[RMDB]
RNA sequence: GGGAACGACUCGAGUAGAGUCGAAAACAAGCUACCAUCUGUAGGAUUAUGGCUGAACGCCUCUAAGUCAGAAUCCAUGCUGGAAUAGACGAUAAUCACCUUUCCCGAUGUGCCGCGAAUAGCGAUAUUAGUGAUUGCACUUCGGUGCAAUCACUAAAAAAGAAACAACAACAACAAC
Reactivity to DMS in 0.01 (KOAc 150mM, MgCl2 10mM, bicine 150mM(pH8.5), 24C), signal-to-noise 1, nucleotides 027 to 126: c010a050a100g020c100u000a100c040c000a020u000c040u000g020u020a090g010g000a040u020u060a120u000g000g000c010u000g000a120a090c110g000c010c000u050c000u040a090a160g000u000c000a000g000a010a160u010c000c010a110u000g010c000u000g000g000a090a000u000a040g000a140c120g000a070u040a060a200u000c070a040c090c020u000u010u000c000c000c000g000a050u010g000u010g000c040c080g000c050g010a040a120u000a060g040c050g010a080u000a060
Reactivity to 2A3 in 0.01 (KOAc 150mM, MgCl2 10mM, bicine 150mM(pH8.5), 24C), signal-to-noise 2, nucleotides 027 to 126: c030a030a010g030c020u080a040c000c020a050u060c070u100g140u110a060g020g010a020u050u080a090u080g010g000c000u040g010a120a000c030g030c020c030u040c020u010a040a030g010u010c000a000g010a030a000u000c000c000a050u080g040c000u060g000g040a070a090u050a070g020a070c000g030a020u080a090a010u100c030a030c030c000u000u070u000c010c000c010g000a040u100g050u080g060c000c000g020c020g060a100a100u110a140g030c010g000a000u030a080